This 170-nucleotide RNA was probed chemically with DMS and 2A3. The 2A3 profile rests on 86,793 reads. Source: RMDB library 15KLIB, as collected in RNAgym. Reactivities are rounded to 0.1 and cut off at 0 and 3. 2A3 adducts were read by reverse transcription with SuperScript II with manganese.
RNA sequence: GGGAACGACUCGAGUAGAGUCGAAAAGGUACACCUUGUAUAAAGGUUGCUGCUAUGCAGUCUAAACUUACAGAUCUUAAAUGCACAUCUGUGGUUCUCCUCUCUGUGCUCCAACAGUUACACUUAGCCAGUAAGGUGUUCGCACCUUACAAAAGAAACAACAACAACAAC
Reactivity to DMS in 0.01 (KOAc 150mM, MgCl2 10mM, bicine 150mM(pH8.5), 24C), signal-to-noise 9, nucleotides 027 to 129: g000g000u020a010c080a000c030c030u010u040g010u030a070u080a110a050a040g010g010u010u030g020c050u010g050c030u020a020u090g030c030a010g030u000c070u060a080a080a090c090u040u070a040c020a010g020a050u000c100u040u040a070a110a120u080g030c230a080c140a010u040c030u030g020u000g030g030u020u010c020u000c030c030u030c010u000c030u000g040u030g010c000u010c050c020a060a090c110a020g000u020u000a070c080a040c050u000u000a020g030c000c020a070
Reactivity to 2A3 in 0.01 (KOAc 150mM, MgCl2 10mM, bicine 150mM(pH8.5), 24C), signal-to-noise 9, nucleotides 027 to 129: g070g020u090a030c020a030c060c000u020u030g100u070a200u160a140a060a010g000g000u010u040g010c000u010g000c030u150a090u300g010c010a010g010u030c060u160a060a070a040c020u080u140a020c040a010g030a040u030c020u080u200a150a200a140u230g040c090a050c010a090u000c000u020g020u020g020g010u050u020c010u010c010c000u020c000u000c010u020g030u040g030c010u030c030c010a060a050c020a070g020u050u060a040c060a020c050u070u070a020g060c030c010a000